This 207-nucleotide RNA was probed chemically with 2A3 and DMS. DMS adducts were read by reverse transcription with MarathonRT. Source: RMDB library ARCHII, as collected in RNAgym. For DMS, 2,090 sequencing reads were counted. Values are in units of 0.01, from 0 to 300, in steps of 10. Conditions: 150 mM KOAc, 10 mM MgCl2 and 150 mM bicine (pH 8.5), 24 C.
RNA sequence: GGGAACGACUCGAGUAGAGUCGAAAAGCGCGACAGUAAAGAAUGCCUGAUGCAAGUCAGUUCGCUGGCAACACUUUCGAAUUGCGGGGACGUCCUGAGAGCUCGGUUCUACCAACCAGCAGAGAAAUCUAGCCGGGGCUGAUGUUAACAGCAUCGGACGUCUUAUGGGAUUCGUCCCAUAAGACGUAAAAGAAACAACAACAACAAC
Reactivity to 2A3 in 0.01 (KOAc 150mM, MgCl2 10mM, bicine 150mM(pH8.5), 24C), signal-to-noise 3, nucleotides 027 to 156: g070c020g030c010g080a050c050a050g060u140a030a110a080g130a100a050u100g050c020c030u090g020a060u030g010c040a060a100g000u070c030a020g010u050u190c150g030c250u100g000g020c010a060a040c020a030c070u010u060u070c060g040a190a130u150u090g040c050g000g040g000g000a030c030g070u090c010c010u070g010a040g020a020g060c030u040c150g000g020u070u030c030u050a100c010c040a050a050c020c010a030g020c020a000g020a000g050a090a060a000u080c060u100a050g000c020c000g000g000g000g000c020u020g000a040u030g010u100u070a080a040c010a040g000c000a000u010c010g020g020
Reactivity to DMS in 0.01 (KOAc 150mM, MgCl2 10mM, bicine 150mM(pH8.5), 24C), signal-to-noise 1, nucleotides 027 to 156: g060c080g000c060g010a080c000a070g040u000a090a060a110g000a080a100u000g000c110c030u000g000a050u000g030c120a110a140g000u000c010a020g000u000u010c040g000c040u000g040g000c030a040a100c100a140c080u000u000u000c020g020a120a110u000u000g050c060g000g000g000g000a090c060g000u020c010c010u010g010a110g050a130g000c020u000c070g070g000u000u000c070u000a040c060c020a110a120c010c030a050g000c050a030g010a150g030a080a070a080u000c010u000a200g020c020c020g000g020g010g000c020u030g000a000u010g000u000u000a060a140c150a180g010c010a020u000c020g000g000

Values cover nucleotides 27 to 156.